[RMDB]
RNA sequence: GGGAACGACUCGAGUAGAGUCGAAAAGUGCGCACGUUCGCGUGCGCACAAAGAUAGCUGGAACGCCCAGCACGGAACGAACCGAACAGCGUUAAAAUAAAAAAAUCCGAGCGUUCGCGCUCGGAAACAUUUAAUGAUACUUCGGUAUCAUUAAAUGAAAAGAAACAACAACAACAAC
Reactivity to 2A3 in 0.01 (KOAc 150mM, MgCl2 10mM, bicine 150mM(pH8.5), 24C), signal-to-noise 2, nucleotides 027 to 126: g000u000g000c010g010c010a010c030g050u040u060c150g010c010g080u040g050c000g060c010a000c010a010a000a000g030a040u150a020g010c010u010g020g010a140a100c060g070c070c030c010a020g000c030a020c000g000g010a080a100c030g010a090a070c010c020g010a040a020c020a060g030c000g020u020u090a120a020a100a100u260a060a040a110a080a000a000a020u000c000c000g000a000g000c000g000u070u070c180g000c010g000c120u000c000g000g040a030a000a020
Reactivity to DMS in 0.01 (KOAc 150mM, MgCl2 10mM, bicine 150mM(pH8.5), 24C), signal-to-noise 2, nucleotides 027 to 126: g020u000g020c000g040c000a040c010g020u010u010c140g050c010g120u000g000c000g000c010a010c000a020a060a150g020a160u000a070g010c010u010g000g000a110a110c160g010c090c050c020a040g000c040a130c050g000g000a100a110c130g010a100a170c030c000g020a180a040c100a060g010c000g020u000u000a080a080a140a080u020a030a010a050a130a100a140a130u010c000c000g010a010g010c000g010u000u010c240g060c010g020c000u000c020g020g000a000a020a040